[RMDB]
RNA sequence: GGGAACGACUCGAGUAGAGUCGAAAAGUUCGUAAAAUCAGCAAAAAACGAGGAUUUUUCGUUCAUAUACCUAACAAGAAAGCCGAUAGUGCGCCGCUAUAUUCGCGCACUAUCGACAUCAGACAGGGACGAAGUAAGGGUUCGCCCUUACUUCGUCAAAAGAAACAACAACAACAAC
Reactivity to 2A3 in 0.01 (KOAc 150mM, MgCl2 10mM, bicine 150mM(pH8.5), 24C), signal-to-noise 4, nucleotides 027 to 126: g010u000u010c000g000u000a000a000a010a010u010c010a030g160c110a050a120a030a050a030a050c180g040a130g130g010a020u000u000u000u000u020c000g000u000u000c010a000u040a020u040a240c000c010u080a130a110c080a170a100g190a210a070a030g040c000c020g000a000u000a000g000u030g000c000g000c060c060g010c050u080a060u080a110u290u300c080g000c020g010c010a010c000u000a000u000c000g000a000c000a010u030c010a030g170a220c040a030g110g110
Reactivity to DMS in 0.01 (KOAc 150mM, MgCl2 10mM, bicine 150mM(pH8.5), 24C), signal-to-noise 1, nucleotides 027 to 126: g000u010u010c020g000u000a000a030a000a000u000c000a010g060c120a000a070a080a230a050a050c260g030a060g000g030a010u000u000u000u000u000c000g000u000u000c000a020u010a130u020a070c000c000u000a080a070c170a100a030g020a060a170a100g010c150c030g000a000u000a000g000u000g050c000g030c030c120g040c160u050a030u000a040u000u010c300g000c030g020c000a000c000u000a000u000c040g000a000c000a010u000c040a030g020a200c290a100g010g000
An RNA of 177 nucleotides, treated with 2A3 and DMS and read out base by base.
Reactivities are given for positions 27 through 126.
DMS adducts were read by reverse transcription with MarathonRT.
It was measured as part of the RMDB libraries RFM100 and RFMREP.
For DMS, 1,268 sequencing reads were counted.
The RNA was probed in 150 mM KOAc, 10 mM MgCl2 and 150 mM bicine (pH 8.5) at 24 C.
2A3 adducts were read by reverse transcription with SuperScript II with manganese.
High DMS reactivity at an A or C suggests that its Watson-Crick edge is free.